[RMDB]
RNA sequence: GGGAACGACUCGAGUAGAGUCGAAAAAGUGAGGCUUAUCCCGGGGAACCCGGCGAAUGCCCCCACAUAGCAGAGUCCGGGACCCCCUCCUAAAAGACCGAGGGGGGGUGCUUGGAGCACGGGGGUCUGACCCCCCAGUUCGCUGGGGGGAAAAGAAACAACAACAACAAC
Reactivity to DMS in 0.01 (KOAc 150mM, MgCl2 10mM, bicine 150mM(pH8.5), 24C), signal-to-noise 8, nucleotides 027 to 129: a050g000u020g010a070g010g030c080u030u010a090u040c060c000c000g010g010g010g010a100a100c020c020c000g000g000c070g020a130a080u020g000c030c000c000c010c020a090c120a100u000a070g020c040a070g020a200g020u040c000c040g030g000g010a110c000c000c000c000c000u010c010c010u010a030a070a140a150g000a070c180c180g020a060g040g010g020g010g000g030g060u000g020c020u000u050g000g020a090g000c020a030c080g020g030g000g010g010u010c010u000g000a300
Reactivity to 2A3 in 0.01 (KOAc 150mM, MgCl2 10mM, bicine 150mM(pH8.5), 24C), signal-to-noise 6, nucleotides 027 to 129: a000g110u070g020a020g030g010c010u060u060a070u120c010c010c010g000g000g000g020a030a050c020c000c000g000g000c030g050a080a040u100g000c000c000c000c000c000a070c040a090u190a030g070c070a010g030a020g130u020c000c000g000g000g030a060c000c000c000c000c000u040c000c000u090a140a130a040a040g090a060c120c140g000a170g000g000g000g000g010g010g000u030g100c020u050u100g020g010a020g000c020a020c030g020g000g000g000g010u010c010u030g070a070